[RMDB]
RNA sequence: GGGAACGACUCGAGUAGAGUCGAAAAUUGCCCACAAGGCCCUGCUCUUUGCGCUUCUUGAACUUCCGGAAGUACUCCUGGAUCAGGAACGUGGCGUAGAACUUGCCAACGGUGACCUCAUCAUCUGAGACGUAUGGAGAGGGGAGAGGGGGUAAGAUGAGUCGUAAUCAUUCGUGAUUACGACUCAAAAAGAAACAACAACAACAAC
Reactivity to 2A3 in 0.01 (KOAc 150mM, MgCl2 10mM, bicine 150mM(pH8.5), 24C), signal-to-noise 2, nucleotides 027 to 156: u070u120g060c010c020c000a040c040a040a010g290g000c000c030c020u150g170c020u050c000u060u070u040g000c040g000c000u010u030c010u000u080g000a150a070c030u060u010c030c020g000g010a060a120g090u130a230c050u010c010c030u080g080g000a030u000c020a000g020g060a010a010c010g010u020g030g030c030g080u110a080g050a200a040c120u110u130g010c050c000a120a020c020g050g000u110g110a090c020c030u070c040a080u060c020a020u060c050u020g040a030g050a030c010g010u200a050u080g030g000a080g000a010g020g000g000g020a000g000a020g010g020g030g020g000u020a020a020g090a070
The data come from the RNA Mapping Database (RMDB), library OK3TST. Structure probing data (2A3) for a 207-nucleotide construct. The 2A3 profile rests on 685 reads. For 2A3 the reverse transcriptase was SuperScript II with manganese.